Chemical mapping of a 177-nucleotide RNA with DMS. The RNA was probed in 150 mM KOAc, 10 mM MgCl2 and 150 mM bicine (pH 8.5) at 24 C.

[RMDB]
RNA sequence: GGGAACGACUCGAGUAGAGUCGAAAAGUUGAACGUUAUUACACCUGUUAGAGCAACAAGGAAUGACAUGACUCGUUGUCAUACCGAUGAGUAUAUUGAAUUUCUUUGGAGAGUUACACCUGACACAUGGUCAUCACUCGUUCGCGAGUGAUGACCAAAAAGAAACAACAACAACAAC
Reactivity to DMS in 0.01 (KOAc 150mM, MgCl2 10mM, bicine 150mM(pH8.5), 24C), signal-to-noise 1, nucleotides 027 to 126: g000u000u000g000a050a030c170g000u010u000a100u040u010a120c110a090c040c050u000g010u050u000a030g060a180g010c130a070a240c010a010a010g000g010a100a000u000g000a300c100a040u000g000a090c010u010c010g010u000u010g010u000c180a200u020a070c300c000g000a000u000g010a070g000u000a040u000a100u040u000g010a000a050u000u000u000c010u000u000u000g000g010a270g000a100g000u000u000a030c150a150c090c000u000g030a040c130a070c190a040